[RMDB]
The data come from the RNA Mapping Database (RMDB), library 15KLIB. Structure probing data (DMS and 2A3) for a 170-nucleotide construct. For DMS the reverse transcriptase was MarathonRT. The reactions ran in a buffer of 150 mM KOAc, 10 mM MgCl2 and 150 mM bicine (pH 8.5), at 24 C. For DMS, 9,443 sequencing reads were counted.
RNA sequence: GGGAACGACUCGAGUAGAGUCGAAAAGAGCCGGAGGAGGAGAGGCAAGAGAUCCCGAGGGGGCUUCAGGCUAAAGAGUGGACGAUUUUCGGGGAAGGUCUCCCAAGAAGAACCAGGAACACCCCAAGCACGUGGUGGUUCGCCACCACGAAAAGAAACAACAACAACAAC
Reactivity to DMS in 0.01 (KOAc 150mM, MgCl2 10mM, bicine 150mM(pH8.5), 24C), signal-to-noise 4, nucleotides 027 to 129: g010a170g040c090c060g050g040a030g020g050a040g080g020a100g020a020g000g040c140a070a000g030a030g000a060u040c030c040c020g020a070g000g000g000g000g000c200u000u020c110a110g010g030c000u030a090a100a120g040a060g000u030g040g040a050c070g000a100u030u010u090u070c120g040g010g000g030a120a000g010g020u030c060u000c000c080c020a070a050g020a030a060g000a000a000c070c010a060g050g000a050a080c120a150c040c000c020c080a100a110g070c270a090
Reactivity to 2A3 in 0.01 (KOAc 150mM, MgCl2 10mM, bicine 150mM(pH8.5), 24C), signal-to-noise 2, nucleotides 027 to 129: g060a010g040c010c030g020g040a020g030g000a000g000g010a030g000a000g020g000c020a040a020g040a000g000a050u050c010c010c020g020a070g000g000g000g000g000c000u110u070c040a010g040g000c020u100a090a060a000g050a040g030u050g040g010a020c010g010a020u000u070u030u130c030g010g000g000g000a000a020g010g010u010c070u000c060c020c000a010a000g040a030a010g030a020a010c000c000a000g040g020a020a010c020a050c020c000c000c010a000a040g100c100a100